[RMDB]
The record gives the reactivity of an RNA of 177 nucleotides to DMS and 2A3.
Reactivities are given for positions 27 through 126.
DMS adducts were read by reverse transcription with MarathonRT.
The data come from the RNA Mapping Database (RMDB), library OK2TRN.
RNA sequence: GGGAACGACUCGAGUAGAGUCGAAAAAAGGCAUUGGCUGAAUUCUUGCUUAAUCAAGAGGUGAUUCAUCCCCGCGUUGCGCAUGCCAUCAUGGAGGCAAGCUCUGUAGGUAGGAGAAAGCAAAUUCUAAAUGAUAGGACUUCGGUCCUAUCAUUUAAAAAGAAACAACAACAACAAC
Reactivity to DMS in 0.01 (KOAc 150mM, MgCl2 10mM, bicine 150mM(pH8.5), 24C), signal-to-noise 5, nucleotides 027 to 126: a060a080g000g010c050a080u000u000g010g030c050u000g000a090a100u010u000c030u000u010g030c120u000u010a110a080u010c070a060a060g010a120g020g000u010g010a090u000u000c100a100u000c030c010c040c080g020c090g020u010u010g010c060g000c070a090u010g010c030c030a050u010c100a070u010g000g010a090g000g010c060a060a070g010c030u000c030u000g000u000a030g010g010u000a060g010g000a050g000a070a050a080g010c070a050a050a090u010u010c070
Reactivity to 2A3 in 0.01 (KOAc 150mM, MgCl2 10mM, bicine 150mM(pH8.5), 24C), signal-to-noise 1, nucleotides 027 to 126: a000a000g080g000c050a050u110u110g090g100c010u000g030a060a030u060u020c020u020u070g020c010u070u120a090a080u180c030a040a000g010a090g020g140u120g010a180u130u040c020a060u080c010c000c000c010g070c010g030u080u100g000c040g010c010a040u010g010c010c020a040u070c010a030u050g130g000a000g020g010c020a080a060g050c030u000c020u090g080u080a080g030g020u010a030g000g040a030g000a070a040a010g010c030a120a000a030u140u060c060